The record gives the reactivity of an RNA of 177 nucleotides to 2A3 and DMS. The 2A3 profile rests on 4,689 reads.

RNA sequence: GGGAACGACUCGAGUAGAGUCGAAAAGAAAAUACAAGGCUGACAAAAUCCUUUCCCAACCUCCACGUGGUGUCGGCUGCAUAAUGCAUUAGAAAUGUUGCAUUUAUCAACUGGGAAGGCAAAAAAAGUAUUGUUGUAUCUUCGGAUACAACAAUACAAAAGAAACAACAACAACAAC
Reactivity to 2A3 in 0.01 (KOAc 150mM, MgCl2 10mM, bicine 150mM(pH8.5), 24C), signal-to-noise 3, nucleotides 027 to 126: g000a010a010a010a000u130a020c030a040a020g030g000c000u010g020a000c020a000a040a030a190u140c020c000u050u180u040c000c000c010a000a010c010c000u030c040c070a110c070g060u110g010g000u020g010u030c000g000g000c000u010g000c000a010u050a060a010u020g030c020a020u040u080a080g110a070a120a040u150g050u060u010g000c000a010u060u030u080a050u040c020a010a030c020u020g000g020g010a020a010g020g000c030a020a120a020a000a010a020a020
Reactivity to DMS in 0.01 (KOAc 150mM, MgCl2 10mM, bicine 150mM(pH8.5), 24C), signal-to-noise 3, nucleotides 027 to 126: g010a120a090a090a080u010a070c100a050a100g020g000c020u000g010a040c020a040a030a090a300u000c010c010u000u010u000c000c010c010a060a040c010c000u000c030c080a100c170g010u000g010g020u000g010u000c020g000g000c000u000g000c140a040u000a030a010u010g010c000a010u000u000a030g010a080a070a090u000g000u000u000g000c030a020u010u000u000a070u000c080a040a020c100u000g020g000g020a040a040g000g030c300a010a000a020a070a040a070a050
As a SHAPE reagent, 2A3 marks flexible, mostly unpaired nucleotides at the ribose 2'-OH. For DMS the reverse transcriptase was MarathonRT.